[RMDB]
RNA sequence: GGGAACGACUCGAGUAGAGUCGAAAAGUGGUAUGCUGCUGCAUGCUAAAAUGGCUCCCCUUCCAUAGCAGGAUGAAAUAGAGUCAUUAUCUUGGCAACCAGCCCCUGCCAAUGUGCUCUCAGUCUGCCUUUCCAGCCCCUUCUCUCUACCUAUUCCCACAGGAUUUCAGUUCGCUGAAAUCCUGUGAAAAGAAACAACAACAACAAC
Reactivity to DMS in 0.01 (KOAc 150mM, MgCl2 10mM, bicine 150mM(pH8.5), 24C), signal-to-noise 1, nucleotides 027 to 156: g060u010g030g040u010a070u000g030c000u010g030c090u010g030c000a220u010g000c040u000a020a070a060a060u010g000g020c030u000c010c040c040c010u020u000c030c010a120u010a140g010c160a220g020g020a080u000g000a120a050a140u000a040g010a060g030u000c010a070u000u000a060u000c050u020u000g000g020c040a070a110c080c020a120g020c040c040c020c070u010g070c000c010a040a080u000g040u000g010c020u010c010u000c040a110g010u000c040u000g000c020c050u000u000u000c010c010a050g030c040c040c020c030u000u010c020u010c070u000c030u000a060c010c100u000a220u000u000c030c010
Reactivity to 2A3 in 0.01 (KOAc 150mM, MgCl2 10mM, bicine 150mM(pH8.5), 24C), signal-to-noise 3, nucleotides 027 to 156: g090u050g010g020u050a070u180g020c020u020g020c060u080g020c030a030u010g000c000u080a050a010a000a080u030g000g000c010u020c000c010c010c000u020u000c020c010a100u130a110g060c090a070g050g040a040u040g130a050a070a040u250a050g010a010g010u010c010a010u050u080a090u130c080u050u070g010g000c040a150a300c040c030a010g030c010c000c000c010u010g000c020c000a010a070u060g050u100g040c020u010c000u000c040a020g040u000c020u040g030c010c020u020u020u000c010c000a010g040c020c000c010c000u070u000c010u010c000u000c000u030a060c000c000u030a080u100u080c020c000
The record gives the reactivity of an RNA of 207 nucleotides to DMS and 2A3. The RNA was probed in 150 mM KOAc, 10 mM MgCl2 and 150 mM bicine (pH 8.5) at 24 C.